[RMDB]
RNA sequence: GGGAACGACUCGAGUAGAGUCGAAAAGAUAUGGACUCCAAGGGAGAACCUUAUCGGAAACGAUAGCGUUCGACGAUCUUGUGAGUCCUAAGUCAAACGUAGUAGAGUGUUCGCACUCUACUACGAAGAUUAAUGGAAAGUUCGCUUUCCAUUAAUCAAAAGAAACAACAACAACAAC
Reactivity to DMS in 0.01 (KOAc 150mM, MgCl2 10mM, bicine 150mM(pH8.5), 24C), signal-to-noise 8, nucleotides 027 to 126: g000a010u000a020u010g000g000a020c000u000c000c000a010a010g000g000g010a020g000a010a010c000c030u000u010a010u000c000g020g000a020a010a030c000g010a010u000a010g000c300g010u000u000c000g010a160c300g010a070u000c010u000u000g000u010g000a030g010u000c000c000u000a000a050g000u000c000a120a130a290c020g010u000a000g010u000a000g010a020g030u000g020u000u010c300g020c010a010c000u000c000u000a000c000u000a000c000g010a040a090
Reactivity to 2A3 in 0.01 (KOAc 150mM, MgCl2 10mM, bicine 150mM(pH8.5), 24C), signal-to-noise 8, nucleotides 027 to 126: g000a000u010a010u050g000g000a000c000u000c000c000a000a000g020g000g010a050g020a010a000c020c030u090u120a040u010c000g000g000a010a000a000c000g010a010u000a010g060c070g030u010u010c040g230a300c050g000a100u000c000u020u120g080u160g070a000g000u000c000c000u000a000a000g000u000c000a040a030a120c010g000u000a000g000u000a000g000a010g010u030g060u130u190c300g070c110a000c000u000c000u000a000c000u000a000c000g000a010a020
Record summary: This 177-nucleotide RNA was probed chemically with DMS and 2A3. The RNA was probed in 150 mM KOAc, 10 mM MgCl2 and 150 mM bicine (pH 8.5) at 24 C.